[RMDB]
RNA sequence: GGGAACGACUCGAGUAGAGUCGAAAAUCAAACGAUUUCGAUCGUUUGAAACGGACCACUCCAGCGGGAGUUAAGGCCAUACGGACAGCCGGGUCCACUGCCAGUCAUUCGGUUUCGACCGAAUGAAGACACAAACAAACUUCGGUUUGUUUGUGUCAAAAGAAACAACAACAACAAC
Reactivity to DMS in 0.01 (KOAc 150mM, MgCl2 10mM, bicine 150mM(pH8.5), 24C), signal-to-noise 2, nucleotides 027 to 126: u000c000a000a000a010c000g010a020u000u000u010c200g000a010u000c000g020u000u000u010g000a030a120a120c180g000g010a020c010c010a030c000u000c000c010a230g030c240g040g020g000a020g010u000u000a050a020g010g040c000c000a070u010a090c160g000g010a030c020a250g010c010c020g010g000g010u000c000c010a060c130u010g020c010c010a010g000u000c000a000u000u000c000g020g010u000u000u000c200g000a020c010c000g020a000a010u000g010a020a010
Reactivity to 2A3 in 0.01 (KOAc 150mM, MgCl2 10mM, bicine 150mM(pH8.5), 24C), signal-to-noise 3, nucleotides 027 to 126: u020c000a000a010a000c000g010a000u030u080u180c200g100a010u000c000g000u010u000u020g000a000a000a000c050g000g010a000c000c000a020c010u010c000c020a260g200c260g190g080g000a000g020u040u210a090a090g020g000c000c020a040u050a080c100g010g010a000c010a010g010c000c000g000g000g030u000c010c010a000c040u050g010c020c000a020g070u010c000a000u000u000c000g000g000u000u070u120c240g050a030c000c010g000a000a000u010g000a020a020
Chemical mapping of a 177-nucleotide RNA with DMS and 2A3.
For DMS the reverse transcriptase was MarathonRT.
For DMS, 2,144 sequencing reads were counted.
The 2A3 profile rests on 3,695 reads.
For 2A3 the reverse transcriptase was SuperScript II with manganese.
Source: RMDB library M2PK50, as collected in RNAgym.
Values cover nucleotides 27 to 126.